[RMDB]
RNA sequence: GGGAACGACUCGAGUAGAGUCGAAAAACAUCCUUCGGGAUGUCGGUAGCGUACUACGUAGACAUGCUCGGAGUACCGUUGAAAGUGUCCCAAAUAGGACACUGGAGGUACCGAGCGAGCAACAGCUACGUAUCGCAGUGGGUCCAUUCGUGGACAAGUGUACUAAAUCUUUCGAGAUUUAGUACACAAAAGAAACAACAACAACAAC
Reactivity to DMS in 0.01 (KOAc 150mM, MgCl2 10mM, bicine 150mM(pH8.5), 24C), signal-to-noise 3, nucleotides 027 to 156: a010c010a030u000c000c000u000u010c300g060g000g020a000u000g000u000c000g020g050u010a110g020c020g020u000a090c130u000a020c000g030u000a040g010a070c080a300u000g000c010u000c000g050g010a100g020u000a010c010c000g000u000u010g000a160a160a060g020u000g030u000c000c010c010a060a170a200u000a030g010g010a030c000a010c000u010g010g010a140g040g010u000a020c000c010g020a120g030c010g000a010g020c010a060a120c110a170g010c000u000a010c010g010u000a020u000c030g000c000a150g010u010g020g010g000u000c000c010a060u000u000c190g050u000g000g000a020c010a070a190
Reactivity to 2A3 in 0.01 (KOAc 150mM, MgCl2 10mM, bicine 150mM(pH8.5), 24C), signal-to-noise 6, nucleotides 027 to 156: a000c010a010u020c010c010u040u100c260g140g000g000a010u020g020u040c070g090g160u170a040g020c010g020u050a100c050u000a010c030g000u010a000g030a090c030a130u080g000c000u000c000g010g030a110g030u000a010c000c010g090u100u040g020a030a020a000g010u010g000u020c020c020c020a130a240a130u260a070g000g000a000c000a000c000u000g020g010a010g000g010u000a000c000c020g060a060g070c000g000a000g000c000a020a090c030a080g010c000u000a010c020g000u030a070u300c000g000c010a030g060u200g060g070g000u000c000c010a010u030u080c230g100u060g000g010a010c020a060a040
Structure probing data (DMS and 2A3) for a 207-nucleotide construct.
DMS adducts were read by reverse transcription with MarathonRT.
For DMS, 8,643 sequencing reads were counted.
In probing experiments dimethyl sulfate is read out at A N1 and C N3, which are open when not base-paired.
It was measured as part of the RMDB library RNAMAK.